[RMDB]
RNA sequence: GGGAACGACUCGAGUAGAGUCGAAAAAUAGCUUGGUAUUGGUGUUCGGUUCGGUUUGUGUAGGAUAGGUGGGAGACUGUGAAGCGGGCACGCCAGUGUUCGUGGAGUCGUUGUUGAAAUACCACUCUAAUGGGCUAAUCUUCGGAUUAGCCCAUUAAAAAGAAACAACAACAACAAC
Reactivity to DMS in 0.01 (KOAc 150mM, MgCl2 10mM, bicine 150mM(pH8.5), 24C), signal-to-noise 1, nucleotides 027 to 126: a040u020a060g000c070u000u030g000g000u010a100u000u020g000g050u010g040u000u020c070g010g040u000u000c060g010g000u010u030u020g030u000g000u010a010g000g010a040u020a090g000g010u010g000g020g010a090g000a050c000u000g010u000g010a180a150g000c020g000g000g020c000a000c020g010c100c130a140g010u010g020u010u000c010g030u010g000g000a020g000u000c010g060u020u010g010u020u010g000a020a050a030u010a100c070c040a040c040u000c090

Background: The record gives the reactivity of an RNA of 177 nucleotides to DMS. It was measured as part of the RMDB library RFM100. The DMS profile rests on 2,330 reads. The RNA was probed in 150 mM KOAc, 10 mM MgCl2 and 150 mM bicine (pH 8.5) at 24 C. High DMS reactivity at an A or C suggests that its Watson-Crick edge is free.